About this RNA
An RNA of 177 nucleotides, treated with DMS and read out base by base. Reactivities are given for positions 27 through 126.
[RMDB]
RNA sequence: GGGAACGACUCGAGUAGAGUCGAAAAGCGCCUCGGUUCGCCGAGGCGCAAACAAACACGAAAAGCGGAAAAACGUGAAUACCGCAAAAAGAAACAAAGAAAAAACCGUAUGCUUCGGCAUACGGAAGAAUCUGAAAUAGUUCGCUAUUUCAGAUUCAAAAGAAACAACAACAACAAC
Reactivity to DMS in 0.01 (KOAc 150mM, MgCl2 10mM, bicine 150mM(pH8.5), 24C), signal-to-noise 1, nucleotides 027 to 126: g000c000g020c010c000u000c000g000g010u000u000c180g020c000c000g020a010g010g010c000g050c000a010a050a040c040a050a050a160c100a120c040g010a120a020a070a100g020c000g000g000a080a050a070a050a110c050g020u000g030a120a090u010a220c050c000g020c090a070a050a110a040a030g000a060a080a040c100a080a050a110g000a000a040a110a120a110a090c020c020g000u000a000u000g000c000u010u040c230g030g010c000a000u000a000c000g000g000a000a010
Record summary
The DMS profile rests on 928 reads. For DMS the reverse transcriptase was MarathonRT. The RNA was probed in 150 mM KOAc, 10 mM MgCl2 and 150 mM bicine (pH 8.5) at 24 C.